[RMDB]
RNA sequence: GGGAACGACUCGAGUAGAGUCGAAAAGGGAGGCAAGGGCGCCAGCCAGCCGUGGAGUGCGGCCAGCACCCGGUCGGCGGGCAACAUCGCCAGCGCCGGCCCGCCGCUGCCCUGGCCCAGCAGGAUCGCCACACUCAUUAUUCGUAAUGAGUGUGGCAAAAGAAACAACAACAACAAC
Reactivity to 2A3 in 0.01 (KOAc 150mM, MgCl2 10mM, bicine 150mM(pH8.5), 24C), signal-to-noise 1, nucleotides 027 to 126: g020g020g020a040g010g000c030a020a060g100g000g000c030g030c030c010a000g020c000c030a040g000c010c000g020u050g050g180a300g040u200g000c020g030g070c040c000a010g020c010a050c000c020c030g000g020u110c000g000g000c040g040g000g000c020a060a050c030a140u270c070g030c040c010a150g080c030g020c030c020g010g090c000c010c000g010c000c030g030c050u060g040c000c010c010u020g020g010c030c000c000a030g030c030a000g060g040a100u140c070
Reactivity to DMS in 0.01 (KOAc 150mM, MgCl2 10mM, bicine 150mM(pH8.5), 24C), signal-to-noise 2, nucleotides 027 to 126: g020g010g010a300g010g030c050a180a140g010g000g010c020g020c060c120a100g000c030c030a120g050c010c020g060u010g020g000a210g010u000g000c020g000g000c080c110a080g020c020a060c020c010c000g030g040u010c040g020g020c000g000g010g050c030a080a080c220a100u010c120g000c010c010a110g030c130g000c000c040g030g000c000c010c160g000c040c060g010c080u010g000c030c010c000u000g010g010c000c020c090a150g010c090a060g000g000a130u020c120